Chemical mapping of a 177-nucleotide RNA with DMS and 2A3.
For 2A3 the reverse transcriptase was SuperScript II with manganese.
The RNA was probed in 150 mM KOAc, 10 mM MgCl2 and 150 mM bicine (pH 8.5) at 24 C.
[RMDB]
RNA sequence: GGGAACGACUCGAGUAGAGUCGAAAAACAGUAGUUUUCCAAUAGGUCGAGCAUGUGCUGAAACUGUGUGUACAGAGUUCUCAUAAACACACAGUUUCAGCAUAUGCUGGAUCUACUUGAAGACUACGGUUCAGGUAUAGUUCGCUAUACCUGAACCAAAAGAAACAACAACAACAAC
Reactivity to DMS in 0.01 (KOAc 150mM, MgCl2 10mM, bicine 150mM(pH8.5), 24C), signal-to-noise 2, nucleotides 027 to 126: a120c100a230g010u000a000g000u000u000u000u000c010c040a000a040u010a010g000g000u000c010g000a020g000c010a000u000g030u000g020c000u000g020a000a000a010c000u010g000u000g000u000g050u000a080c300a180g010a110g010u010u000c110u010c100a090u010a100a120a050c000a010c000a010c000a000g000u000u000u000c010a000g000c020a000u000a000u000g010c000u000g000g000a000u000c010u000a010c100u000u000g010a040a010g000a000c000u010a000c000
Reactivity to 2A3 in 0.01 (KOAc 150mM, MgCl2 10mM, bicine 150mM(pH8.5), 24C), signal-to-noise 2, nucleotides 027 to 126: a000c040a000g000u010a000g010u000u000u000u010c010c000a010a000u010a010g010g010u020c040g060a000g000c000a000u000g000u000g000c000u000g020a000a000a000c010u010g000u000g020u020g010u020a080c080a070g080a070g150u240u060c130u030c060a110u290a100a210a000c000a000c000a000c000a000g000u000u000u000c000a000g000c000a000u000a000u000g010c000u000g000g000a000u020c000u000a000c000u010u020g000a000a000g000a000c000u000a000c040